[RMDB]
RNA sequence: GGGAACGACUCGAGUAGAGUCGAAAAGUUUAGAAGUUCGCUUCUAAACAAAUAGAUGGUACCUAUCAACCUUAUAUGUACGUACCCAUGUAAGGUUGACAAAAACGUCCUCGUUCGCGAGGACGAACAAGUCUUCCUACUUCGGUAGGAAGACUUGAAAAGAAACAACAACAACAAC
Reactivity to 2A3 in 0.01 (KOAc 150mM, MgCl2 10mM, bicine 150mM(pH8.5), 24C), signal-to-noise 1, nucleotides 027 to 126: g010u000u040u020a000g000a020a010g010u070u120c170g030c120u010u000c000u010a010a000a010c020a000a150a030u110a030g190a150u150g060g060u100a120c010c010u030a020u030c000a000a000c010c010u010u030a000u020a020u020g080u140a050c170g210u100a030c070c020c000a000u050g000u000a000a010g000g000u010u010g000a000c010a000a040a000a010a040c000g000u000c000c000u000c010g040u050u030c200g030c000g120a000g030g000a000c000g010a010a010
Reactivity to DMS in 0.01 (KOAc 150mM, MgCl2 10mM, bicine 150mM(pH8.5), 24C), signal-to-noise 2, nucleotides 027 to 126: g020u000u010u020a010g010a010a000g030u010u010c270g000c020u020u000c000u010a000a000a000c010a070a110a050u010a130g000a100u000g020g030u000a090c010c010u000a090u020c000a010a010c000c000u000u000a000u000a000u010g000u020a050c160g020u010a150c300c060c010a010u000g010u000a000a010g020g020u000u000g000a010c180a020a050a040a070a130c040g000u000c000c000u000c000g040u000u000c160g000c000g000a010g020g000a010c010g000a040a110
An RNA of 177 nucleotides, treated with 2A3 and DMS and read out base by base. The reactions ran in a buffer of 150 mM KOAc, 10 mM MgCl2 and 150 mM bicine (pH 8.5), at 24 C. For 2A3, 1,729 sequencing reads were counted. The DMS profile rests on 1,119 reads.